[RMDB]
RNA sequence: GGGAACGACUCGAGUAGAGUCGAAAAAAUGGAAGUGUGGCUAUUCAAUGCCCUCUAUCUAUAAAGUACAACGGAUGUGCCUUGAACCGUGUAACCUCUAUAACUAUGGUGCUAGUCUGAAAUUACCCAUGUGGAAAUCGUUCGCGAUUUCCACAUGAAAAGAAACAACAACAACAAC
Reactivity to DMS in 0.01 (KOAc 150mM, MgCl2 10mM, bicine 150mM(pH8.5), 24C), signal-to-noise 2, nucleotides 027 to 126: a100a030u050g000g010a040a020g010u000g000u000g040g020c010u000a170u000u040c300a080a080u000g020c010c000c000u000c000u000a080u020c000u000a060u020a100a080a100g020u000a070c080a020a090c140g000g000a100u000g000u000g010c020c020u000u020g010a100a080c050c020g020u000g030u000a060a060c090c040u000c090u000a030u000a100a060c070u000a090u000g000g020u000g000c040u000a030g010u010c060u010g000a050a040a090u000u000a060c050c020
Reactivity to 2A3 in 0.01 (KOAc 150mM, MgCl2 10mM, bicine 150mM(pH8.5), 24C), signal-to-noise 2, nucleotides 027 to 126: a010a000u090g040g020a020a040g000u040g020u130g050g000c040u030a050u010u240c090a090a060u080g010c000c000c000u000c000u010a280u020c020u000a040u090a120a170a010g050u050a020c030a080a000c070g060g030a090u080g010u060g090c010c030u040u080g030a040a020c020c000g000u030g000u020a020a040c010c020u020c010u090a100u070a190a030c050u090a090u190g030g040u020g040c020u020a020g080u030c040u070g020a070a080a020u120u060a030c000c000